[RMDB]
Conditions: 150 mM KOAc, 10 mM MgCl2 and 150 mM bicine (pH 8.5), 24 C. Structure probing data (2A3 and DMS) for a 207-nucleotide construct. Values cover nucleotides 27 to 156. DMS adducts were read by reverse transcription with MarathonRT. The data come from the RNA Mapping Database (RMDB), library OK3TST. For 2A3 the reverse transcriptase was SuperScript II with manganese.

RNA sequence: GGGAACGACUCGAGUAGAGUCGAAAAGAUAGCAGGGAGAACUAGAGGAGCUAUAGCCAGGGAGCCAGCUAAGGGAGGGAAGACAAAGGAGUGGAGACACAACUACUCCAUCUCUCCCCAGCCUCCUCAUCUCCAGAAUGAUGGCACACCUGGGAGAUAAUUAUAGUAGGUUCGCCUACUAUAAUUAAAAAGAAACAACAACAACAAC
Reactivity to 2A3 in 0.01 (KOAc 150mM, MgCl2 10mM, bicine 150mM(pH8.5), 24C), signal-to-noise 3, nucleotides 027 to 156: g060a020u140a000g040c040a020g030g070g010a030g000a080a080c080u090a090g010a030g030g010a010g020c030u110a080u130a200g080c010c010a020g020g020g000a020g020c040c020a010g010c030u050a030a080g000g000g010a000g010g010g010a040a030g070a070c100a070a110a020g000g000a000g000u000g000g070a060g100a070c080a010c000a140a110c020u040a000c000u000c000c000a060u000c010u000c000u000c010c000c000c000a010g000c010c010u010c000c010u000c020a030u030c010u020c050c010a000g070a060a010u100g060a030u060g000g010c010a030c010a000c040c010u020g030g010g010a050g010a050
Reactivity to DMS in 0.01 (KOAc 150mM, MgCl2 10mM, bicine 150mM(pH8.5), 24C), signal-to-noise 2, nucleotides 027 to 156: g000a170u000a000g010c030a100g040g020g030a070g020a120a100c090u010a120g000a050g020g000a080g000c040u000a160u000a120g000c020c000a050g040g020g020a190g060c000c030a090g040c030u000a070a070g010g000g020a040g030g000g010a020a080g040a170c050a080a100a180g030g030a080g030u000g000g000a240g000a200c140a060c190a070a120c020u000a030c010u000c000c000a130u000c020u000c000u000c000c000c020c050a060g000c030c010u000c010c000u000c050a090u010c030u010c070c030a130g010a070a050u000g010a060u010g030g000c010a120c080a130c030c010u000g020g020g030a090g000a220